RNA sequence: GGGAACGACUCGAGUAGAGUCGAAAAUUAACCUUCAUUAUCAACCGGAGCUUUCUUCUUAUCCUCAGUAGCAUAAGCAAAAGUGAAACGUCAAGGAAUAGGAGCAAUUGCUCCAAAGCUUGAGUGAGGAAAAGUAAUGAUGGAAGUGGGAGAAUGCAACAAGUAGAAGGUUCGCCUUCUACUUGUUAAAAGAAACAACAACAACAAC
Reactivity to 2A3 in 0.01 (KOAc 150mM, MgCl2 10mM, bicine 150mM(pH8.5), 24C), signal-to-noise 3, nucleotides 027 to 156: u130u050a040a060c010c000u130u050c050a040u020u180a050u170c020a050a050c020c050g120g000a030g030c020u000u040u020c010u060u030c010u040u110a080u120c010c010u030c050a050g030u120a040g050c070a060u080a210a000g060c030a040a090a110a020g050u090g080a110a050a030c050g100u040c020a010a010g030g050a170a050u090a090g000g010a000g000c060a160a300u150u300g010c030u000c010c000a000a010a000g000c030u040u010g000a010g030u070g010a030g010g020a010a110a000a010g050u050a030a050u110g070a000u050g000g030a020a060g040u190g090g000g000a050g070a080a040u150g040c030
Reactivity to DMS in 0.01 (KOAc 150mM, MgCl2 10mM, bicine 150mM(pH8.5), 24C), signal-to-noise 2, nucleotides 027 to 156: u010u010a080a220c020c010u000u000c000a000u010u000a020u010c020a080a280c040c010g040g050a300g020c020u000u010u000c060u000u010c030u000u000a060u020c010c000u000c030a300g010u000a100g070c100a050u030a030a080g030c300a060a040a040a060g010u000g000a080a100a100c050g000u000c000a010a050g000g020a080a120u020a260g000g010a010g020c020a170a200u000u020g060c000u030c000c010a010a070a160g000c040u000u000g010a070g000u010g020a100g010g000a020a100a040a080g020u000a030a060u010g020a030u000g010g020a090a110g020u000g030g000g000a120g000a050a090u000g020c050
Chemical mapping of a 207-nucleotide RNA with 2A3 and DMS. 2A3 adducts were read by reverse transcription with SuperScript II with manganese. DMS (dimethyl sulfate) methylates the pairing face of unpaired adenines and cytosines. The 2A3 profile rests on 1,716 reads. DMS adducts were read by reverse transcription with MarathonRT.